[RMDB]
RNA sequence: GGGAACGACUCGAGUAGAGUCGAAAACGCUAGCAGGUACAGUACGUACGUACGCGCGUACGUAGGAUCGUCGACAGACUGAUCUAGUACAUGCUAGCACAUGAUCAUGGUACUCGGAUCGCGGUACACCGUUCACCCUUUUCGAAGGGUGAACGGUAAAAGAAACAACAACAACAAC
Reactivity to 2A3 in 0.01 (KOAc 150mM, MgCl2 10mM, bicine 150mM(pH8.5), 24C), signal-to-noise 2, nucleotides 027 to 126: c010g000c010u010a000g000c010a010g030g030u000a000c010a030g100u010a010c000g010u000a000c010g010u060a080c190g180c040g010c000g050u010a000c000g000u020a030g040g000a000u000c000g010u000c000g050a100c030a140g000a010c030u300g020a020u000c000u050a020g000u000a000c010a010u000g020c010u010a010g030c000a010c000a030u090g010a030u070c040a060u100g090g000u040a000c050u020c050g010g070a100u070c000g030c020g030g000u030a010c010
Reactivity to DMS in 0.01 (KOAc 150mM, MgCl2 10mM, bicine 150mM(pH8.5), 24C), signal-to-noise 2, nucleotides 027 to 126: c180g000c010u000a010g010c010a030g000g030u030a000c010a300g010u000a000c010g000u000a010c010g000u000a060c300g040c300g020c000g000u000a000c000g000u010a040g010g010a010u000c010g040u000c000g000a200c300a120g010a020c000u060g020a010u000c000u000a110g020u000a000c000a020u000g020c000u000a010g010c000a030c140a040u000g010a050u000c110a160u010g010g000u010a020c030u000c040g060g000a050u000c040g040c030g000g010u000a080c060
Notes: Conditions: 150 mM KOAc, 10 mM MgCl2 and 150 mM bicine (pH 8.5), 24 C. This 177-nucleotide RNA was probed chemically with 2A3 and DMS. For 2A3 the reverse transcriptase was SuperScript II with manganese. DMS adducts were read by reverse transcription with MarathonRT. The data come from the RNA Mapping Database (RMDB), library OK2TRN.